Conditions: 150 mM KOAc, 10 mM MgCl2 and 150 mM bicine (pH 8.5), 24 C. Structure probing data (DMS) for a 177-nucleotide construct.
RNA sequence: GGGAACGACUCGAGUAGAGUCGAAAACCCCGCAGUAGCCGAAUGAAGUUGGCGAAAGCGACGCAACUCACUAAGGGGAAGAUCGUAACCACUGAGGUGUAAAAGGGCGUAAAGCAAAGACGAUCCAUGCUCAAUGAUCAUUCGUGAUCAUUGAGCAAAAAGAAACAACAACAACAAC
Reactivity to DMS in 0.01 (KOAc 150mM, MgCl2 10mM, bicine 150mM(pH8.5), 24C), signal-to-noise 3, nucleotides 027 to 126: c050c000c020c090g040c080a060g000u000a280g010c000c020g120a080a170u010g010a120a150g030u000u020g000g010c000g010a040a160a100g000c010g000a080c100g000c030a120a080c060u010c020a030c110u010a130a110g000g000g000g010a130a070g000a030u010c040g000u000a070a120c050c010a050c100u000g000a190g000g000u000g020u000a040a090a070a040g010g010g040c040g010u010a030a030a150g000c130a030a020a040g000a050c030g010a030u010c020c210a060
DMS adducts were read by reverse transcription with MarathonRT.